[RMDB]
RNA sequence: GGGAACGACUCGAGUAGAGUCGAAAAUAAGCCAAAGACAACCACCUUUCCCGCUGACAAUAGCGUUAUCCCUCUGCACUUCGGUAAUAUGAGGGCACAGUAAAUCCCGCAAGGAUGAGAAUGUGAUUAAACAGUUACAGCUUCGGCUGUAACUGAAGACACUACCUCAGUUCGCUGAGGUAGUGUCAAAAGAAACAACAACAACAAC
Reactivity to 2A3 in 0.01 (KOAc 150mM, MgCl2 10mM, bicine 150mM(pH8.5), 24C), signal-to-noise 3, nucleotides 027 to 156: u080a030a050g030c020c010a170a040a000g080a090c060a070a050c050c020a070c040c030u020u070u040c030c020c010g000c030u040g060a070c090a160a170u130a140g040c030g050u090u080a080u130c000c000c000u000c010u030g040c030a020c040u060u090c150g050g040u050a030a010u090a080u300g000a010g000g000g000c010a000c000a000g000u020a020a040a000u000c000c010c010g090c100a050a030g000g000a000u020g000a020g000a010a020u010g010u010g010a020u060u300a070a150a050c010a010g000u000u010a000c000a010g020c000u010u080c170g100g000c010u000g000u000a000a000c010u000g000a000a000
Reactivity to DMS in 0.01 (KOAc 150mM, MgCl2 10mM, bicine 150mM(pH8.5), 24C), signal-to-noise 1, nucleotides 027 to 156: u010a060a070g020c000c000a040a050a060g010a150c020a200a140c040c000a100c060c030u000u000u010c010c000c000g050c040u000g000a110c080a140a090u000a060g000c060g010u000u000a060u000c000c010c010u000c040u000g010c050a060c030u010u010c180g020g020u010a040a200u000a080u010g010a010g000g030g050c060a080c030a020g040u000a100a220a110u000c010c010c000g010c220a070a180g010g030a060u000g020a090g020a090a140u000g000u020g040a120u010u000a020a120a260c000a040g000u010u000a030c000a010g000c000u000u000c290g020g020c000u000g000u000a010a000c000u010g010a030a020